Chemical mapping of a 207-nucleotide RNA with 2A3 and DMS.
The reactions ran in a buffer of 150 mM KOAc, 10 mM MgCl2 and 150 mM bicine (pH 8.5), at 24 C.
For 2A3 the reverse transcriptase was SuperScript II with manganese.

RNA sequence: GGGAACGACUCGAGUAGAGUCGAAAAAUAUCGAUCGGUUCCUCUGGAGAAAGCGGACAUCGCCGCCGGACACGGGGAGAAUCCCUAUCUUCACGUAGGUUGCGGCGACCGAGGCCUCGGGAAACGUCUUCCUCUACAUCUGGCCAGGGUAUAGAUACUCUACUAGAGUGUUCGCACUCUAGUAGAGAAAAGAAACAACAACAACAAC
Reactivity to 2A3 in 0.01 (KOAc 150mM, MgCl2 10mM, bicine 150mM(pH8.5), 24C), signal-to-noise 2, nucleotides 027 to 156: a000u170a040u140c040g010a030u030c040g020g030u050u030c010c010u040c040u080g030g000a080g040a050a120a030g090c020g000g020a020c010a070u000c000g000c010c000g010c030c020g030g020a040c020a000c060g000g000g000g000a010g010a030a030u050c020c020c000u060a080u020c000u000u010c000a010c020g010u030a060g080g070u090u110g020c010g000g000c000g020a000c020c000g010a020g000g040c020c020u000c020g020g010g000a030a060a030c020g010u020c050u040u010c000c010u040c020u060a080c050a110u070c070u050g050g030c040c060a030g060g000g020u110a050u040a110g050a020u080a050
Reactivity to DMS in 0.01 (KOAc 150mM, MgCl2 10mM, bicine 150mM(pH8.5), 24C), signal-to-noise 1, nucleotides 027 to 156: a170u020a090u010c060g000a030u050c020g020g010u010u000c000c050u020c060u000g010g010a130g010a090a060a140g040c010g030g030a290c040a090u000c040g030c030c010g050c030c050g000g000a080c060a010c000g010g000g030g040a040g010a080a040u010c080c070c000u000a160u000c010u010u010c010a020c030g010u010a070g030g000u000u000g000c010g000g020c000g050a000c040c010g000a300g040g020c020c000u000c040g020g040g020a070a080a070c030g000u010c050u030u010c030c010u000c040u000a020c050a050u000c020u020g000g000c030c030a110g020g040g000u000a060u030a090g030a250u010a130
The data come from the RNA Mapping Database (RMDB), library OK3TST.
DMS adducts were read by reverse transcription with MarathonRT.